Chemical mapping of a 177-nucleotide RNA with 2A3 and DMS. The DMS profile rests on 3,506 reads. 2A3 is a SHAPE reagent: it acylates the 2'-hydroxyl of flexible nucleotides of all four kinds. DMS adducts were read by reverse transcription with MarathonRT.
RNA sequence: GGGAACGACUCGAGUAGAGUCGAAAACGGCGGCAUGCGCGGGGUUGUCUCUGGCGCUGCCCUCCAGGCCAUGCACGACCUGGGCUUGCGGAACGCCUUUGAUGCUGUGUAUGGAAGUAGCGCGGGACAAUCGCGUGUAGUUCGCUACACGCGAUUGAAAAGAAACAACAACAACAAC
Reactivity to 2A3 in 0.01 (KOAc 150mM, MgCl2 10mM, bicine 150mM(pH8.5), 24C), signal-to-noise 2, nucleotides 027 to 126: c060g030g020c000g010g000c050a060u090g000c040g000c040g050g060g020g020u080u110g090u040c030u010c030u130g180g010c000g020c030u040g010c000c000c000u050c030c020a010g000g090c000c010a010u060g030c020a000c050g060a060c030c000u010g000g000g020c010u030u150g070c100g180g130a120a030c080g020c030c000u120u150u080g090a150u100g010c060u090g010u010g000u020a000u020g030g060a070a030g000u060a020g010c030g010c040g030g030g000a010
Reactivity to DMS in 0.01 (KOAc 150mM, MgCl2 10mM, bicine 150mM(pH8.5), 24C), signal-to-noise 2, nucleotides 027 to 126: c100g000g020c180g020g000c040a030u000g030c020g030c020g000g020g000g010u000u010g010u000c010u000c020u010g030g010c000g010c000u010g010c020c060c060u010c050c070a090g020g000c010c010a030u000g020c080a030c050g010a080c010c050u010g010g000g000c020u000u000g010c190g010g010a110a110c190g010c010c000u000u000u010g000a130u010g020c040u000g010u000g020u000a040u000g000g000a120a090g000u000a040g010c020g020c020g000g010g010a110